[RMDB]
RNA sequence: GGGAACGACUCGAGUAGAGUCGAAAAACUCCUAUUCCAACACGUCCUCGUCGUACAGAGUGGUAACAUGUGUCACCACAUAUCCAAGCUUGGGUACACGGGCAUGACCCAACCCCUUGGGCGGAUGAAAACCAGAUUACGUUCGCGUAAUCUGGAACCUCACAAGUAUCUUCGGAUACUUGUGAGGAAAAGAAACAACAACAACAAC
Reactivity to 2A3 in 0.01 (KOAc 150mM, MgCl2 10mM, bicine 150mM(pH8.5), 24C), signal-to-noise 2, nucleotides 027 to 156: a000c060u050c050c010u070a100u090u070c030c050a080a030c060a050c080g060u040c020c030u060c040g100u000c040g000u130a090c090a070g170a060g090u030g050g030u090a090a030c030a110u160g070u040g040u150c030a050c030c000a050c030a060u110a030u040c010c020a040a020g040c050u030u010g010g000g010u020a000c010a000c030g040g000g000c070a170u270g270a300c020c010c020a010a020c000c000c000c000u000u000g000g010g010c020g010g010a020u070g050a030a100a010a010c000c010a000g000a000u000u000a000c010g000u010u050c220g020c010g100u000a000a000u000c000u000g000g000a000a010
Reactivity to DMS in 0.01 (KOAc 150mM, MgCl2 10mM, bicine 150mM(pH8.5), 24C), signal-to-noise 1, nucleotides 027 to 156: a140c040u000c030c010u010a120u000u000c020c140a020a050c030a110c050g010u000c050c040u000c090g030u000c050g000u020a160c060a110g000a170g020u000g030g060u000a020a090c000a240u000g030u000g040u000c040a020c000c000a020c020a000u000a020u000c010c030a040a300g000c050u010u000g040g000g020u000a090c060a160c080g020g010g060c020a080u010g010a210c010c040c000a070a020c060c020c010c000u000u000g020g010g030c300g010g000a080u020g000a070a100a120a220c030c000a040g000a030u000u000a000c000g010u000u000c280g120c060g000u000a020a000u000c000u010g010g000a000a000
Overview
Chemical mapping of a 207-nucleotide RNA with 2A3 and DMS. As a SHAPE reagent, 2A3 marks flexible, mostly unpaired nucleotides at the ribose 2'-OH. Conditions: 150 mM KOAc, 10 mM MgCl2 and 150 mM bicine (pH 8.5), 24 C. For 2A3, 2,014 sequencing reads were counted.